[RMDB]
RNA sequence: GGGAACGACUCGAGUAGAGUCGAAAAGAAGGGUGAAAGCCCUUGAUACUGUAGUGGAAAUUAUAAAUAAGAAGAGUUCUGAGUUGCUUAAUCAGAACUAAAAUAAAAAGACAAGCAUUAUUACAAACAUGGCGAGGUAAGUUCGCUUACCUCGCAAGACGAUAUGACAGUUCGCUGUCAUAUCGUCAAAAGAAACAACAACAACAAC
Reactivity to 2A3 in 0.01 (KOAc 150mM, MgCl2 10mM, bicine 150mM(pH8.5), 24C), signal-to-noise 1, nucleotides 027 to 156: g060a000a020g000g020g010u020g040a090a070a000g020c000c000c000u000u020g000a010u030a060c000u100g080u170a000g040u090g010g040a000a030a100u060u080a200u200a300a050a020u140a160a010g060a030a030g070a020g140u000u040c000u000g040a090g030u090u090g110c060u060u160a020a070u040c000a000g000a000a000c020u000a000a080a000a010u130a000a060a030a000a000g090a090c050a020a000g000c050a000u000u070a010u010u040a090c090a100a060a010c050a080u110g070g000c000g000a000g000g000u000a000a010g000u010u040c050g000c010u000u000a000c000c000u000c010g010c000a000a000